Chemical mapping of a 207-nucleotide RNA with 2A3. Source: RMDB library OK3TST, as collected in RNAgym.
RNA sequence: GGGAACGACUCGAGUAGAGUCGAAAAAACAAACAGAGUGUUCCUGCUCAUUUUGUCGCCUUGAAUGGGAGCAAACUGAACAUUAACCUUAAGAUGGGAGUGGAGGUGAGGGUCUCAGGUUGGGGAUGCUGGGAUCCCCCUGUGACAGCUCCCAGAACUCGUCUAUGUCAUUCGUGACAUAGACGAGAAAAGAAACAACAACAACAAC
Reactivity to 2A3 in 0.01 (KOAc 150mM, MgCl2 10mM, bicine 150mM(pH8.5), 24C), signal-to-noise 4, nucleotides 027 to 156: a000a000c150a030a060a010c040a040g040a010g030u030g010u020u000c000c010u000g010c000u000c010a050u000u050u070u100g140u120c190g090c060c020u110u160g140a130a070u250g030g010g000a000g010c000a010a040a030c030u040g020a030a010c020a060u090u190a120a110c020c040u120u100a080a040g040a100u080g000g020g000a010g010u060g000g100a020g010g000u060g060a250g040g010g000u000c000u000c010a030g040g010u090u090g140g010g000g000a010u170g140c010u000g000g020g000a020u020c000c000c000c000c000u050g040u040g140a020c030a010g030c000u020c000c000c000a000g000a010a000